[RMDB]
RNA sequence: GGGAACGACUCGAGUAGAGUCGAAAAUUCAUCAGUAUUUGUGAGUGGAAUAACUAUUCUUAAUGGGUUCACAGAAGUCCCAUCUUGUAAAUCCAAAAACGCUAUACGUUUUAAUAGUCUUAUGGAAAUUAUUACGAUAUUUCGAUAUCGUAAUAAUAAAAGAAACAACAACAACAAC
Reactivity to 2A3 in 0.01 (KOAc 150mM, MgCl2 10mM, bicine 150mM(pH8.5), 24C), signal-to-noise 5, nucleotides 027 to 126: u090u020c010a060u040c040a020g080u090a200u090u260u140g110u050g050a090g060u100g010g100a060a050u130a080a070c060u080a110u150u070c040u060u120a120a130u110g020g000g010u010u020c040a020c000a040g050a060a010g020u030c000c010c000a010u020c010u010u020g030u040a010a060a010u020c000c000a000a070a040a030a010c040g000c060u070a030u060a180c040g030u030u030u030u140a090a120u030a030g020u020c020u080u150a150u160g040g030a100a180
Reactivity to DMS in 0.01 (KOAc 150mM, MgCl2 10mM, bicine 150mM(pH8.5), 24C), signal-to-noise 5, nucleotides 027 to 126: u030u010c100a050u030c090a100g000u010a050u020u010u010g020u000g010a080g020u010g010g000a150a060u020a060a090c050u010a030u010u010c170u020u020a080a140u000g000g000g000u010u000c030a010c000a000g010a030a100g000u000c000c000c000a210u000c010u010u010g010u000a020a010a020u010c010c010a020a040a040a030a040c070g000c210u030a070u020a170c070g010u000u000u010u000a020a050u000a030g010u000c070u010u010a050u010g010g000a070a110